[RMDB]
RNA sequence: GGGAACGACUCGAGUAGAGUCGAAAAACUAGUAUGUACAGGGGUGAGUUGACCUGUCAUCUAGACUGCUGACCAUCAACUCACCGGUCAGCUGGAUGAUGUUCACAGAGUACGACAUCAGUACUCAGUGUAAGGAUUCCUUCGGGGAUCUUUACACAAAAGAAACAACAACAACAAC
Reactivity to 2A3 in 0.01 (KOAc 150mM, MgCl2 10mM, bicine 150mM(pH8.5), 24C), signal-to-noise 9, nucleotides 027 to 126: a000c010u010a010g060u130a060u060g070u090a010c000a010g040g030g030g060u130g090a150g060u060u080g110a070c010c010u000g000u000c000a000u000c000u010a030g070a150c040u040g000c000u000g000a000c010c010a030u110c040a060a090c060u040c080a070c030c060g000g000u000c000a000g000c010u010g030g010a070u080g020a040u080g070u080u000c060a050c040a100g010a000g010u020a010c030g080a020c100a170u130c060a060g000u000a000c000u000c020a000
Reactivity to DMS in 0.01 (KOAc 150mM, MgCl2 10mM, bicine 150mM(pH8.5), 24C), signal-to-noise 9, nucleotides 027 to 126: a280c010u000a010g010u030a010u000g000u060a010c000a010g000g000g000g010u010g000a030g020u000u010g000a070c020c010u000g000u000c010a010u000c010u000a020g010a210c060u010g000c010u000g000a010c000c050a170u020c070a030a030c050u010c040a070c140c170g000g000u000c000a000g000c000u000g000g000a090u010g000a070u010g010u000u000c060a100c130a100g000a020g010u010a000c000g010a160c210a100u050c130a100g010u000a010c000u000c000a120
This 177-nucleotide RNA was probed chemically with 2A3 and DMS. Values cover nucleotides 27 to 126. High DMS reactivity at an A or C suggests that its Watson-Crick edge is free. 2A3 adducts were read by reverse transcription with SuperScript II with manganese. The data come from the RNA Mapping Database (RMDB), library OK1LIB.